[RMDB]
RNA sequence: GGGAACGACUCGAGUAGAGUCGAAAAUGAUGCCUUGUUGAUUUCUAUGACUAAUCAUAGUUUCAGUGUGCAAAAACACAUUGGCGCUCCAGCAAACUUGCGUGUUGUUGGUCAUGCCAUGCAAGGCUAAGAGAAUCGUUCGCGAUUCUCAAAAGAAACAACAACAACAAC
Reactivity to 2A3 in 0.01 (KOAc 150mM, MgCl2 10mM, bicine 150mM(pH8.5), 24C), signal-to-noise 9, nucleotides 027 to 129: u180g080a060u130g000c000c000u010u000g010u020u020g000a050u050u090u060c000u010a020u010g070a120c090u200a210a130u150c000a010u010a010g000u000u000u000c010a010g010u020g010u040g050c100a070a080a010a060a020c010a000c010a040u010u040g010g000c030g020c090u020c010c000a020g000c000a020a040a030c080u300u300g120c110g140u300g030u060u020g010u000u000g010g000u020c020a030u180g010c000c010a010u030g000c000a010a000g000g000c010u020a070a010
Reactivity to DMS in 0.01 (KOAc 150mM, MgCl2 10mM, bicine 150mM(pH8.5), 24C), signal-to-noise 6, nucleotides 027 to 129: u050g000a070u040g020c010c000u010u010g000u000u000g020a000u090u020u030c000u030a030u010g020a110c300u050a180a090u030c000a000u020a040g020u000u000u000c000a020g040u000g000u020g060c080a070a090a050a140a120c020a000c020a060u000u000g010g010c000g000c110u000c020c040a010g000c020a010a010a030c030u070u070g060c280g010u020g020u030u000g030u030u010g000g020u000c180a130u050g000c040c000a040u030g010c000a000a010g020g010c020u000a080a110
Annotation: Conditions: 150 mM KOAc, 10 mM MgCl2 and 150 mM bicine (pH 8.5), 24 C. Chemical mapping of a 170-nucleotide RNA with 2A3 and DMS. The 2A3 profile rests on 20,447 reads. It was measured as part of the RMDB library 15KLIB. For DMS the reverse transcriptase was MarathonRT.